An RNA of 207 nucleotides, treated with 2A3 and read out base by base. The RNA was probed in 150 mM KOAc, 10 mM MgCl2 and 150 mM bicine (pH 8.5) at 24 C.
RNA sequence: GGGAACGACUCGAGUAGAGUCGAAAAUGGUUAGCAUUAGUGCGUGUCAUGACACGUGUUGUAUGCGUGCACAACUAAUAUCAUAAUGUCACGAUUGCAGUACUAAUAUCACACAAUACCAGCCGCGCGAUCGUACGGUACACUAUGACAUUGUGUGCAGCCAACCUAUGUUCGCAUAGGUUGGCUGAAAAGAAACAACAACAACAAC
Reactivity to 2A3 in 0.01 (KOAc 150mM, MgCl2 10mM, bicine 150mM(pH8.5), 24C), signal-to-noise 2, nucleotides 027 to 156: u130g000g020u120u070a040g000c070a010u110u020a070g000u020g080c000g020u000g070u100c170a200u240g050a000c000a000c090g070u070g030u100u020g070u030a080u030g050c130g020u080g000c000a010c010a020a100c020u100a110a000u050a020u230c120a100u050a080a050u060g040u030c030a000c070g020a010u000u140g000c030a010g010u040a030c090u040a000a190u110a080u260c060a000c000a000c000a100a140u080a120c000c040a010g000c070c030g030c000g010c000g070a090u030c000g050u070a080c100g010g000u050a010c000a030c140u120a010u070g000a030c040a040u010u020g000u000g000u030g010